[RMDB]
RNA sequence: GGGAACGACUCGAGUAGAGUCGAAAAGAGAAUGAAAUGCGUAUGAUGGAAGAUGACCAAGCAUUGAUUAUCAUCUAGCUUUGUCGCGACUGGCUCCGGCUAGAUCGGGAUCGGCCUGAUGUAGACCGUCUGCUACGGCUGGAGGGUGCACGGGCAGUGAUGCGAUUGUAUUCGUACAAUCGCAUCAAAAAGAAACAACAACAACAAC
Reactivity to DMS in 0.01 (KOAc 150mM, MgCl2 10mM, bicine 150mM(pH8.5), 24C), signal-to-noise 2, nucleotides 027 to 156: g000a100g020a070a150u020g000a050a070a050u000g010c050g030u020a090u000g010a080u000g000g010a080a060g050a060u040g000a040c040c050a060a250g020c050a130u000u000g000a120u000u000a060u000c020a080u000c020u010a070g010c020u000u000u010g020u010c030g010c050g020a100c080u000g010g020c000u000c090c070g030g000c020u000a030g010a070u000c050g020g000g000a170u000c280g050g000c000c020u000g020a100u000g000u000a050g010a090c030c010g000u000c000u010g010c060u010a140c060g040g000c030u010g010g000a150g000g000g010u000g010c000a060c010g010g010g040c070a120g040
Reactivity to 2A3 in 0.01 (KOAc 150mM, MgCl2 10mM, bicine 150mM(pH8.5), 24C), signal-to-noise 5, nucleotides 027 to 156: g050a010g050a050a070u140g020a080a040a040u100g020c050g060u140a060u140g100a070u100g060g040a040a030g040a100u120g020a020c030c000a010a020g020c030a100u000u110g030a020u120u120a070u200c020a000u010c020u030a020g020c000u030u060u110g050u020c050g020c020g170a060c020u040g010g000c010u030c050c110g030g010c000u030a030g060a220u020c010g000g050g030a030u040c050g080g020c000c000u080g060a170u040g050u050a010g070a150c040c010g080u030c020u010g040c020u030a050c090g040g010c010u020g010g020a030g000g050g000u010g000c040a020c030g020g010g000c000a030g050

An RNA of 207 nucleotides, treated with DMS and 2A3 and read out base by base. The 2A3 profile rests on 3,120 reads. 2A3 adducts were read by reverse transcription with SuperScript II with manganese.